[RMDB]
RNA sequence: GGGAACGACUCGAGUAGAGUCGAAAAGAAAGCGCGAAAGGUAUGAAAAGAACAGUCACUACCUGAAGAUGUCUAGGUAGACACUGAGUGGACAAGACUGUCUACAAAUGCCUGAAGCGCGAAGAAAGGGUAAUACGUUGUUCGCAACGUAUUACCCAAAAGAAACAACAACAACAAC
Reactivity to 2A3 in 0.01 (KOAc 150mM, MgCl2 10mM, bicine 150mM(pH8.5), 24C), signal-to-noise 3, nucleotides 027 to 126: g090a020a060a010g030c020g000c000g090a040a020a000g000g000u020a010u030g160a080a140a060a030g060a050a020c000a000g000u010c010a010c160u160a020c020c020u020g040a000a000g070a110u110g000u000c010u030a060g070g170u300a040g050a000c000a020c000u000g000a010g120u160g000g030a060c060a160a050g010a000c010u010g020u020c000u000a040c030a060a140a000u020g010c000c030u000g100a030a000g000c010g000c000g010a000a000g000a040a020a000
Reactivity to DMS in 0.01 (KOAc 150mM, MgCl2 10mM, bicine 150mM(pH8.5), 24C), signal-to-noise 3, nucleotides 027 to 126: g000a010a130a240g020c000g020c000g030a010a300a000g090g000u000a010u000g000a040a040a000a020g000a050a060c010a000g050u000c020a260c160u040a200c000c000u010g000a060a020g000a060u040g000u030c060u000a270g120g040u060a020g020a040c020a000c030u000g020a080g060u030g000g000a020c210a140a100g000a000c010u000g000u000c010u000a050c160a060a230a010u000g020c000c000u010g030a180a300g010c000g000c000g000a080a110g000a100a190a140